[RMDB]
The record gives the reactivity of an RNA of 177 nucleotides to 2A3 and DMS. For 2A3, 35,744 sequencing reads were counted. Source: RMDB library OK1LIB, as collected in RNAgym. Reactivities are given for positions 27 through 126. DMS (dimethyl sulfate) methylates the pairing face of unpaired adenines and cytosines.
RNA sequence: GGGAACGACUCGAGUAGAGUCGAAAAGUAAGACGAAACCGUGCUCUUGGUCGUGCCGCCCGGGGCAAACGUACACGUCCCGGCCAUGCCGGCCAGCAGGAUGCACCCAACCACCAGCGGCACCAGCCGCACUGCUAUGAUUCGUCAUAGCAGUGCGAAAAGAAACAACAACAACAAC
Reactivity to 2A3 in 0.01 (KOAc 150mM, MgCl2 10mM, bicine 150mM(pH8.5), 24C), signal-to-noise 9, nucleotides 027 to 126: g100u100a060a050g050a060c080g030a100a040a020c040c030g040u050g030c010u030c020u100u100g010g010u030c040g110u200g030c010c040g020c020c000c000g000g000g000g000c030a080a120a070c170g120u200a050c090a020c140g020u020c000c000c000g000g000c020c010a150u260g000c010c000g000g020c000c000a010g000c010a010g020g060a030u120g010c020a030c010c010c000a020a040c010c020a020c010c030a010g020c010g030g000c020a020c030c010a040g060c020
Reactivity to DMS in 0.01 (KOAc 150mM, MgCl2 10mM, bicine 150mM(pH8.5), 24C), signal-to-noise 8, nucleotides 027 to 126: g010u010a060a080g010a070c060g010a090a080a090c100c040g000u010g010c030u010c070u020u000g010g020u020c010g000u050g020c020c300g030c300c020c020g000g000g020g000c000a020a070a100c200g010u040a080c250a110c110g010u000c000c000c000g000g000c070c090a090u040g010c000c020g010g000c010c010a050g010c050a090g000g010a100u010g010c050a080c010c020c020a070a070c060c050a050c080c050a060g010c030g000g000c010a060c050c100a100g010c130